[RMDB]
RNA sequence: GGGAACGACUCGAGUAGAGUCGAAAAGAUAUGGAGUUCAGGCUGCGAGGAAGUCGGAAACGACUUCUCCCCACCGAACUACAGCGCAGACUCCUAAGUCAAAGGAGUACGGUUCGCCGUACUCCAAGUACAAGGGAGUGUUCGCACUCCCUUGUACAAAAGAAACAACAACAACAAC
Reactivity to 2A3 in 0.01 (KOAc 150mM, MgCl2 10mM, bicine 150mM(pH8.5), 24C), signal-to-noise 1, nucleotides 027 to 126: g040a020u110a070u110g000g020a010g000u020u040c030a000g060g080c030u060g020c050g090a070g080g020a020a010g000u020c000g010g040a030a040a020c010g000a000c000u020u010c020u070c030c000c040c010a140c070c060g060a090a020c070u120a070c110a020g000c040g000c040a010g020a040c000u020c020c020u020a120a020g070u040c050a120a080a130g010g000a000g020u000a000c010g000g000u020u070c260g020c050c000g020u000a000c000u000c000c000a000a010
Reactivity to DMS in 0.01 (KOAc 150mM, MgCl2 10mM, bicine 150mM(pH8.5), 24C), signal-to-noise 3, nucleotides 027 to 126: g010a080u000a250u000g000g000a030g010u000u000c040a290g000g000c050u000g000c210g000a080g000g020a000a010g030u020c000g030g000a090a140a160c010g030a000c000u000u010c020u010c020c000c040c110a300c130c100g000a070a040c060u000a090c020a030g010c040g000c080a300g000a010c010u000c020c000u000a070a110g000u000c000a070a190a190g000g010a000g010u000a000c000g010g010u000u010c230g020c000c020g010u000a000c010u000c000c010a020a060
Structure probing data (2A3 and DMS) for a 177-nucleotide construct. For DMS, 1,989 sequencing reads were counted. The reactions ran in a buffer of 150 mM KOAc, 10 mM MgCl2 and 150 mM bicine (pH 8.5), at 24 C. It was measured as part of the RMDB library TTRDEL.